[RMDB]
Conditions: 150 mM KOAc, 10 mM MgCl2 and 150 mM bicine (pH 8.5), 24 C. This 177-nucleotide RNA was probed chemically with DMS and 2A3. High 2A3 reactivity points to a flexible backbone, as in loops and unpaired stretches. The 2A3 profile rests on 1,825 reads.

RNA sequence: GGGAACGACUCGAGUAGAGUCGAAAAAUAAACCGUAAGUCAUAGUACAUAUAGAGGCCAAUUCUGUAAACUUUUUUAAAGUCUAUGGAAAACCCUCUAUGUGUCUCCAAUAGAGAACGGACAUCUCAAUAUUGUCUGGGUUCGCCCAGACAAUAUUAAAAGAAACAACAACAACAAC
Reactivity to DMS in 0.01 (KOAc 150mM, MgCl2 10mM, bicine 150mM(pH8.5), 24C), signal-to-noise 2, nucleotides 027 to 126: a070u010a070a030a110c000c020g000u000a030a180g020u010c040a130u040a190g000u010a020c020a010u000a000u000a000g000a000g000g020c190c140a100a160u000u000c000u000g010u010a000a050a000c000u000u000u000u010u000u060a020a030a020g000u010c020u000a000u000g000g000a000a030a140a300c300c000c010u000c000u000a000u000g000u000g020u010c030u000c190c160a100a120u010a130g010a020g000a070a000c010g020g020a120c060a060u000c030u000c040
Reactivity to 2A3 in 0.01 (KOAc 150mM, MgCl2 10mM, bicine 150mM(pH8.5), 24C), signal-to-noise 3, nucleotides 027 to 126: a000u120a020a040a020c010c010g030u040a090a060g060u060c020a050u070a130g040u110a040c000a010u010a000u000a000g010a000g010g000c070c050a070a230u040u000c000u000g000u010a000a030a020c000u030u030u020u000u070u300a010a030a000g000u000c010u000a000u020g000g000a010a000a020a000c010c000c000u010c000u010a000u000g000u010g000u000c000u010c010c010a100a090u090a160g040a000g020a060a010c010g010g030a030c050a140u040c020u020c010